[RMDB]
Structure probing data (DMS and 2A3) for a 177-nucleotide construct. Reactivities are rounded to 0.1 and cut off at 0 and 3. The data come from the RNA Mapping Database (RMDB), library OK2TRN. Reactivities are given for positions 27 through 126.

RNA sequence: GGGAACGACUCGAGUAGAGUCGAAAAAACCCGUCGUGUGUGGCGUCGUGUCCGUCGGGGGCGAUGUACAAGCGCACCGAGGACGGCAUCGUGCUCGUCGACCAGGACCGCUGCCGCGGCUGGCGGAGCGCUAUUAUCUCUUCGGAGAUAAUAGCGCAAAAGAAACAACAACAACAAC
Reactivity to DMS in 0.01 (KOAc 150mM, MgCl2 10mM, bicine 150mM(pH8.5), 24C), signal-to-noise 2, nucleotides 027 to 126: a080a070c040c000c000g000u000c010g020u010g000u010g040u000g000g020c010g040u000c040g000u000g010u010c000c000g020u000c020g020g020g000g020g020c000g020a030u000g000u020a070c200a120a130g000c070g000c070a080c020c040g010a100g000g000a060c080g000g000c030a070u010c090g030u000g020c000u010c020g010u000c010g000a120c070c060a080g000g000a050c020c040g000c010u020g000c040c040g010c020g010g000c030u010g000g000c030g000g010a090
Reactivity to 2A3 in 0.01 (KOAc 150mM, MgCl2 10mM, bicine 150mM(pH8.5), 24C), signal-to-noise 2, nucleotides 027 to 126: a010a010c010c010c000g000u000c020g000u020g020u030g010u000g000g030c030g000u030c060g080u050g030u110c030c020g030u030c020g000g000g020g040g000c000g020a010u070g040u130a140c050a220a120g020c060g000c060a100c100c070g010a070g040g100a020c030g010g000c000a040u120c040g020u060g090c030u020c030g090u000c010g060a060c020c000a010g050g030a020c010c140g010c000u050g000c000c010g000c020g000g030c010u020g010g020c040g030g020a030
2A3 adducts were read by reverse transcription with SuperScript II with manganese. DMS adducts were read by reverse transcription with MarathonRT. Conditions: 150 mM KOAc, 10 mM MgCl2 and 150 mM bicine (pH 8.5), 24 C.